Structure probing data (2A3 and DMS) for a 177-nucleotide construct. Source: RMDB library OK2TRN, as collected in RNAgym. Conditions: 150 mM KOAc, 10 mM MgCl2 and 150 mM bicine (pH 8.5), 24 C. The 2A3 profile rests on 2,227 reads.
RNA sequence: GGGAACGACUCGAGUAGAGUCGAAAAUCAGGAGGCUGAGGCACAAGAAUUGCUUCAACCCAGGAGGUGGAGGCUGCAAUGAGCCGAGAUCACGUCACUGUACUCCAGCCUGGGCAACAGAGCAAGAUGCCUAACAUAGAUUCGUCUAUGUUAGGCAAAAAGAAACAACAACAACAAC
Reactivity to 2A3 in 0.01 (KOAc 150mM, MgCl2 10mM, bicine 150mM(pH8.5), 24C), signal-to-noise 2, nucleotides 027 to 126: u070c010a000g010g060a020g080g000c050u020g040a000g020g000c040a020c020a060a030g090a140a120u060u010g010c000u090u070c030a030a060c000c010c000a020g040g040a080g050g250u050g010g020a010g050g050c140u030g040c040a090a090u100g000a050g120c060c020g050a050g040a090u120c080a000c080g010u020c030a030c070u050g040u130a040c010u000c000c010a010g040c020c000u010g020g030g000c010a080a030c010a030g050a010g030c010a000a040g050a140
Reactivity to DMS in 0.01 (KOAc 150mM, MgCl2 10mM, bicine 150mM(pH8.5), 24C), signal-to-noise 6, nucleotides 027 to 126: u000c050a090g000g010a080g010g010c030u000g010a060g010g010c050a060c150a100a100g000a120a110u000u010g010c000u000u010c080a120a080c010c010c010a040g010g010a060g020g010u000g000g010a070g010g000c150u000g020c030a030a060u000g000a050g000c080c030g000a140g000a090u010c140a080c090g000u000c020a030c060u000g010u000a070c030u000c010c020a050g000c000c010u000g000g000g010c050a030a070c200a090g000a050g000c040a040a050g010a150